This 177-nucleotide RNA was probed chemically with DMS and 2A3. Source: RMDB library OK2TST, as collected in RNAgym. The DMS profile rests on 1,323 reads. For DMS the reverse transcriptase was MarathonRT. The 2A3 profile rests on 776 reads. Conditions: 150 mM KOAc, 10 mM MgCl2 and 150 mM bicine (pH 8.5), 24 C.
RNA sequence: GGGAACGACUCGAGUAGAGUCGAAAAGUUAGCCCUGAAGAAGUGGCCCUAUGCUUUCUUUGACAUGCCUGUAAAAACAAAAACCACAUGUGUAAGAAAAUGUGUUUAUAGUGCAGUAGGUGAUGGGCGCUAUUUCCUGAUUCGUCAGGAAAUAGCGAAAAGAAACAACAACAACAAC
Reactivity to DMS in 0.01 (KOAc 150mM, MgCl2 10mM, bicine 150mM(pH8.5), 24C), signal-to-noise 2, nucleotides 027 to 126: g030u010u010a160g020c020c010c020u010g010a100a030g020a120a030g040u000g000g030c020c040c040u010a060u000g010c070u000u010u000c010u000u000u000g020a110c060a080u000g000c020c000u000g000u010a020a030a050a130a120c070a030a060a110a200a110c220c020a030c050a050u000g010u010g020u000a130a100g000a050a100a080a070u000g000u010g020u000u000u000a030u000a090g000u000g000c030a080g040u010a030g010g020u040g000a110u000g000g020g020
Reactivity to 2A3 in 0.01 (KOAc 150mM, MgCl2 10mM, bicine 150mM(pH8.5), 24C), signal-to-noise 1, nucleotides 027 to 126: g070u030u070a000g000c000c000c000u020g090a070a090g000a100a020g070u090g100g020c000c000c000u120a130u150g050c050u090u130u010c000u050u110u070g090a070c030a050u040g020c040c030u040g050u110a110a110a000a090a000c050a070a180a050a000a000c050c010a010c020a090u090g060u020g000u160a070a000g050a130a160a000a010u020g000u010g020u010u030u030a150u000a030g080u170g000c000a050g000u100a080g000g110u110g070a050u120g030g030g010